[RMDB]
RNA sequence: GGGAACGACUCGAGUAGAGUCGAAAAACAUACCGGUUCAGCAUUUGAUGGUACUAUGUAUGGUGCCUUUAUGGAUAAACAAGUGCACCAAGUUCAGUUAACAGACAAAUACUGCAGUGUUAAUGUAUAGCCACUUUGUUCGCAAAGUGGAAAAGAAACAACAACAACAAC
Reactivity to DMS in 0.01 (KOAc 150mM, MgCl2 10mM, bicine 150mM(pH8.5), 24C), signal-to-noise 8, nucleotides 027 to 129: a000c070a080u040a080c050c030g010g010u030u020c030a000g000c070a030u030u010u030g010a120u000g010g010u000a040c030u030a070u000g030u020a080u020g000g030u010g020c040c000u010u020u050a070u010g000g000a120u070a070a090a070c220a070a020g000u030g000c000a030c030c010a030a070g000u000u000c080a040g000u010u000a030a040c020a030g000a040c050a010a010a010u030a010c010u020g030c110a100g020u000g030u020u020a070a070u020g000u000a030u020a120g000
Reactivity to 2A3 in 0.01 (KOAc 150mM, MgCl2 10mM, bicine 150mM(pH8.5), 24C), signal-to-noise 9, nucleotides 027 to 129: a010c040a040u160a040c000c030g030g020u080u070c010a010g000c010a050u020u020u060g060a050u050g030g050u030a040c030u060a040u150g090u040a090u090g010g000u010g020c010c000u010u030u050a160u100g130g020a110u230a110a070a030c060a060a030g040u090g190c000a010c000c000a010a040g030u050u080c040a000g000u040u060a090a030c010a030g200a080c020a020a030a010u080a050c020u010g030c030a060g040u020g020u190u080a060a020u030g070u040a080u090a110g040